An RNA of 177 nucleotides, treated with 2A3 and DMS and read out base by base. It was measured as part of the RMDB library OK1LIB. The 2A3 profile rests on 5,554 reads. 2A3 adducts were read by reverse transcription with SuperScript II with manganese.

RNA sequence: GGGAACGACUCGAGUAGAGUCGAAAAACAUCAAGCCGGAACGGGCCCCGUCGUCUUAAGCGUUGGGCAACCACUAUCGUUAAUCAAUCGCACGGCUGGCCCCGUAUCAAAUUGCCGUGCGCGAAUAGGCACCGGUCUGCUUCGGCAGAUUGGUGCCAAAAGAAACAACAACAACAAC
Reactivity to 2A3 in 0.01 (KOAc 150mM, MgCl2 10mM, bicine 150mM(pH8.5), 24C), signal-to-noise 6, nucleotides 027 to 126: a000c050a070u130c080a090a020g050c020c000g030g040a070a030c010g000g010g000c000c000c010c020g050u070c030g020u010c040u080u160a150a020g010c010g060u080u090g000g030g010c050a040a050c030c010a050c050u120a100u160c070g060u060u130a110a050u170c080a040a070u100c010g010c000a000c000g000g000c000u030g030g010c020c000c000c030g070u110a090u210c080a080a050a140u150u100g000c000c000g010u020g000c010g000c010g030a070a100u190a190
Reactivity to DMS in 0.01 (KOAc 150mM, MgCl2 10mM, bicine 150mM(pH8.5), 24C), signal-to-noise 3, nucleotides 027 to 126: a040c070a060u020c110a100a100g000c020c050g000g020a060a050c160g010g000g000c060c000c050c050g020u000c040g000u000c080u010u050a090a110g000c030g030u000u000g030g000g000c140a100a100c010c010a070c100u000a060u030c060g000u060u000a070a120u040c150a060a090u040c020g000c000a010c030g000g020c000u000g010g000c030c020c020c030g030u000a070u050c180a040a060a040u040u000g000c000c000g010u000g000c010g000c250g000a070a050u030a120